[RMDB]
RNA sequence: GGGAACGACUCGAGUAGAGUCGAAAAAGAUUACGUGGGACAGCCCACUUAUCCGCACAGUCAACUUCAAGUGCAGACAUCCGCAGAUCUAUUCAGUUUUCUAGCACUUGCCACUGUUUAGGUCGCCUCCCGACUCAGGCUUCGGCCUGAGUCGGGAAAAAGAAACAACAACAACAAC
Reactivity to 2A3 in 0.01 (KOAc 150mM, MgCl2 10mM, bicine 150mM(pH8.5), 24C), signal-to-noise 1, nucleotides 027 to 126: a000g030a120u250u040a030c150g000u000g020g020g070a090c010a050g300c050c000c000a000c000u000u020a040u000c000c000g020c000a000c000a000g040u180c130a160a190c040u160u130c020a300a000g000u040g040c100a000g010a040c020a090u030c000c070g060c040a030g000a000u010c010u000a000u010u000c000a000g040u070u030u000u200c020u050a100g100c000a100c150u130u240g000c000c040a000c010u000g030u000u080u030a010g000g000u000c000g000c000c040